[RMDB]
RNA sequence: GGGAACGACUCGAGUAGAGUCGAAAAAAUUUCUAUAAUGAGGUGUCAAAAUGAAAAAGUUAACAACGCUAUUAUUAGCAUCAACGUUAUUAAUUGCUGCAUGUGGGAACGACGAUAGUAAGAAGGACCUCGAGAUACUAUUCGUAGUAUCUCGAGGAAAAGAAACAACAACAACAAC
Reactivity to DMS in 0.01 (KOAc 150mM, MgCl2 10mM, bicine 150mM(pH8.5), 24C), signal-to-noise 2, nucleotides 027 to 126: a030a130u020u000u010c030u010a050u030a000a080u000g010a130g000g000u010g040u030c030a010a070a070a090u000g010a040a050a060a110a030g010u000u000a060a090c180a120a070c060g030c030u020a000u000u000a100u000u000a040g010c060a070u000c120a050a060c280g010u010u000a000u000u020a050a060u010u000g000c000u010g000c010a090u000g010u000g010g000g000a060a080c110g000a100c130g010a050u000a060g030u040a070a090g010a090a090g010g020a280
Reactivity to 2A3 in 0.01 (KOAc 150mM, MgCl2 10mM, bicine 150mM(pH8.5), 24C), signal-to-noise 2, nucleotides 027 to 126: a000a070u060u100u100c040u020a070u010a140a070u040g000a010g000g020u030g050u160c110a050a000a000a160u140g250a080a110a070a080a060g030u050u040a070a000c080a050a010c040g000c030u050a040u100u010a090u040u030a000g000c050a010u110c090a080a050c020g010u080u000a000u000u000a120a040u010u110g010c050u020g040c000a020u060g000u050g010g090g050a050a000c010g070a000c030g030a060u020a060g070u060a130a050g040a000a120g140g120a080
Chemical mapping of a 177-nucleotide RNA with DMS and 2A3. Reactivities are given for positions 27 through 126. Values are in units of 0.01, from 0 to 300, in steps of 10. Conditions: 150 mM KOAc, 10 mM MgCl2 and 150 mM bicine (pH 8.5), 24 C. For 2A3 the reverse transcriptase was SuperScript II with manganese.